An RNA of 177 nucleotides, treated with 2A3 and DMS and read out base by base.
[RMDB]
RNA sequence: GGGAACGACUCGAGUAGAGUCGAAAAUAAUCUGACGGGCCAUGAAAUCAGAUUUCAUGCGGAUCUCAUAUCAAGUCAGAUAUGGGGUGGCCCCACCUGGGACAAUUCACAGUCUCAGAAUUGUGAAGAUAGUAGUGUAUUUCGAUGCAUUGCUAUCAAAAGAAACAACAACAACAAC
Reactivity to 2A3 in 0.01 (KOAc 150mM, MgCl2 10mM, bicine 150mM(pH8.5), 24C), signal-to-noise 9, nucleotides 027 to 126: u090a000a050u020c010u020g020a020c050g010g000g000c010c000a000u010g020a000a020a020u100c070a080g100a280u020u010u020c010a010u020g020c050g100g060a030u010c010u000c000a000u010a000u010c020a040a100g300u090c030a020g030a000u000a000u000g000g000g000g010u020g030g000c000c000c000c000a040c000c010u000g000g000g000a000c000a020a030u080u070c060a070c020a080g000u000c010u000c010a000g020a020a140u110u080g050u020g050a070a070
Reactivity to DMS in 0.01 (KOAc 150mM, MgCl2 10mM, bicine 150mM(pH8.5), 24C), signal-to-noise 9, nucleotides 027 to 126: u030a070a070u010c060u000g020a090c170g010g010g010c050c020a020u010g000a010a020a030u010c230a130g010a300u000u000u000c020a010u000g010c110g010g000a030u010c010u000c020a010u000a010u010c010a120a160g010u060c190a060g000a000u000a000u000g000g000g000g010u010g000g000c020c000c000c120a050c160c000u000g010g000g000a010c010a050a070u010u010c100a050c120a050g000u000c000u000c000a010g000a060a060u020u010g000u000g000a100a120
2A3 adducts were read by reverse transcription with SuperScript II with manganese.
For 2A3, 26,346 sequencing reads were counted.
Conditions: 150 mM KOAc, 10 mM MgCl2 and 150 mM bicine (pH 8.5), 24 C.